[RMDB]
RNA sequence: GGGAACGACUCGAGUAGAGUCGAAAACAUUUGCCAACUUUCGAUGAUGUAGUAAAAAUAGCAAAUGAAUAUAAUAUGAAUUUAAAUGUAGAAUUAAAAGGUAUUACUGGACCGAAUGGACUAGCACAGUACCAAUUCUUUUCGAAGAAUUGGUACUAAAAGAAACAACAACAACAAC
Reactivity to DMS in 0.01 (KOAc 150mM, MgCl2 10mM, bicine 150mM(pH8.5), 24C), signal-to-noise 2, nucleotides 027 to 126: c030a060u000u010u000g020c000c130a110a070c150u000u020u000c020g000a110u010g000a060u010g000u050a040g010u040a000a050a100a070a130u000a100g000c020a000a020a040u000g000a140a070u090a130u060a040a080u010a150u030g000a110a100u000u010u040a030a040a120u030g000u000a070g020a080a060u030u010a040a010a040a080g000g000u000a000u010u010a030c110u010g000g000a080c020c030g010a030a030u010g000g000a030c060u010a010g030c100a080c300
Reactivity to 2A3 in 0.01 (KOAc 150mM, MgCl2 10mM, bicine 150mM(pH8.5), 24C), signal-to-noise 4, nucleotides 027 to 126: c010a000u000u020u030g030c030c020a060a010c090u170u250u150c070g250a210u300g080a110u180g090u110a030g060u040a060a030a110a090a120u050a080g020c000a020a010a020u010g010a020a000u170a000u030a090a160u080a130u130g060a110a110u070u190u220a170a120a100u080g050u090a030g030a100a100u090u130a130a130a010a100g040g010u090a050u110u100a090c030u040g000g040a020c000c000g030a060a130u280g000g040a030c010u000a010g010c050a030c000